[RMDB]
RNA sequence: GGGAACGACUCGAGUAGAGUCGAAAAGCUUCCUCUUGGCGCGGAGGUCUAACUGCGCUCGCUCCCCAUAUCGGUGUGGGCGCACCGGAUUUACAAAUUAAAGUCCUUUAGGGAGCGGAAAGGGACAAAAACUUGCACGUGUUCGCACGUGCAAGAAUCUAAGUUAGAGGUUCGCCUCUAACUUAGAAAAAGAAACAACAACAACAAC
Reactivity to DMS in 0.01 (KOAc 150mM, MgCl2 10mM, bicine 150mM(pH8.5), 24C), signal-to-noise 2, nucleotides 027 to 156: g020c110u000u000c000c000u010c040u000u000g020g000c010g060c050g010g010a090g040g030u010c150u000a080a160c020u000g010c010g000c000u000c020g020c000u000c000c000c010c040a160u010a100u000c030g020g050u000g020u000g010g030g030c090g000c020a010c000c000g020g030a190u010u000u000a240c110a070a080a160u010u000a070a080a050g030u000c000c000u000u000u010a030g000g000g000a040g040c010g040g000a030a050a060g000g000g030a070c040a120a070a120a160a040c000u010u010g000c010a000c000g020u000g020u000u000c190g050c020a000c000g030u000g000c000a010a010g000a040a050
Reactivity to 2A3 in 0.01 (KOAc 150mM, MgCl2 10mM, bicine 150mM(pH8.5), 24C), signal-to-noise 2, nucleotides 027 to 156: g030c020u110u040c000c010u000c000u020u030g040g010c000g000c010g040g000a020g000g050u030c050u080a080a070c050u060g010c000g010c000u000c010g000c000u010c010c000c000c000a040u120a080u140c020g000g000u000g000u010g040g000g000c010g000c010a000c000c000g020g010a020u170u300u000a100c240a060a000a050u120u200a120a150a020g000u000c000c000u010u000u030a020g000g000g000a010g000c020g000g000a040a020a010g060g010g030a020c070a070a080a030a040a050c010u000u000g010c000a000c000g000u020g030u080u080c170g040c080a000c000g010u000g000c000a000a000g000a000a000
This 207-nucleotide RNA was probed chemically with DMS and 2A3. For DMS, 4,589 sequencing reads were counted. The data come from the RNA Mapping Database (RMDB), library M2RFPK.